[RMDB]
RNA sequence: GGGAACGACUCGAGUAGAGUCGAAAAUCCGACGAGCUGAACGCUUUCGAAGGAAAGCUUGACCAGCUAAUCUUCUGCAACCCCAUUACGAGGACUGCCCUUAGAGGCUCAUGGCGAUAGGUCACCCAAAACUAUUUGAGGUUCGCCUCAAAUAGAACUUCUGGAACACGUUCGCGUGUUCCAGAAGAAAAGAAACAACAACAACAAC
Reactivity to 2A3 in 0.01 (KOAc 150mM, MgCl2 10mM, bicine 150mM(pH8.5), 24C), signal-to-noise 1, nucleotides 027 to 156: u030c020c010g040a040c040g060a020g030c030u020g020a100a050c060g000c000u000u100u070c120g030a110a050g160g040a070a070a020g020c000u060u070g080a080c060c000a000g030c000u050a110a100u050c050u060u030c060u090g050c020a050a160c050c000c020c000a000u120u080a050c060g020a070g000g050a020c020u020g010c000c000c060u030u070a070g020a070g130g000c030u030c070a070u090g020g020c000g030a070u090a160g060g010u000c020a060c000c020c000a000a200a100a120c000u010a020u000u000u000g000a000g000g100u000u080c200g160c010c000u040c000a000a000a000u000a000g000a000a000
The record gives the reactivity of an RNA of 207 nucleotides to 2A3. 2A3 is a SHAPE reagent: it acylates the 2'-hydroxyl of flexible nucleotides of all four kinds.